[RMDB]
The record gives the reactivity of an RNA of 177 nucleotides to 2A3 and DMS. For DMS the reverse transcriptase was MarathonRT. It was measured as part of the RMDB library M2PK50. The reactions ran in a buffer of 150 mM KOAc, 10 mM MgCl2 and 150 mM bicine (pH 8.5), at 24 C. Values cover nucleotides 27 to 126. Values are in units of 0.01, from 0 to 300, in steps of 10. 2A3 adducts were read by reverse transcription with SuperScript II with manganese. For DMS, 7,903 sequencing reads were counted.
RNA sequence: GGGAACGACUCGAGUAGAGUCGAAAACCUACUGCCUUCGGGCAGUAGGAAACAGGUGCUUCUACAACCUGAAUAACUAGAUGAAACAUGUAGUGUAGAAGAAAAGGAACCGCUUCGGCGGUUCCAAGACUAUAUACACGUUCGCGUGUAUAUAGUCAAAAGAAACAACAACAACAAC
Reactivity to 2A3 in 0.01 (KOAc 150mM, MgCl2 10mM, bicine 150mM(pH8.5), 24C), signal-to-noise 5, nucleotides 027 to 126: c000c000u000a000c000u000g010c000c000u030u070c170g050g000g010c000a000g000u000a000g000g000a030a030a010c020a010g020g040u030g030c040u020u020c000u010a010c000a030a020c010c010u020g030a040a070u130a070a020c100u060a030g070a290u130g100a190a160a040c050a070u170g060u260a090g080u050g000u050a000g010a060a000g020a010a090a010a020g000g000a000a000c000c000g050c060u040u080c210g100g000c000g000g000u000u000c000c000a000a000
Reactivity to DMS in 0.01 (KOAc 150mM, MgCl2 10mM, bicine 150mM(pH8.5), 24C), signal-to-noise 5, nucleotides 027 to 126: c000c000u000a000c010u000g000c000c000u000u010c210g050g010g020c000a000g010u010a000g000g000a010a060a150c030a010g010g010u000g010c060u000u000c000u000a020c010a130a040c010c010u000g000a130a110u010a090a100c040u010a060g000a070u010g010a130a100a120c120a050u000g010u000a050g010u000g020u000a010g000a020a030g010a100a050a110a110g020g000a020a010c000c000g020c010u000u010c150g010g010c000g020g010u000u000c000c000a010a040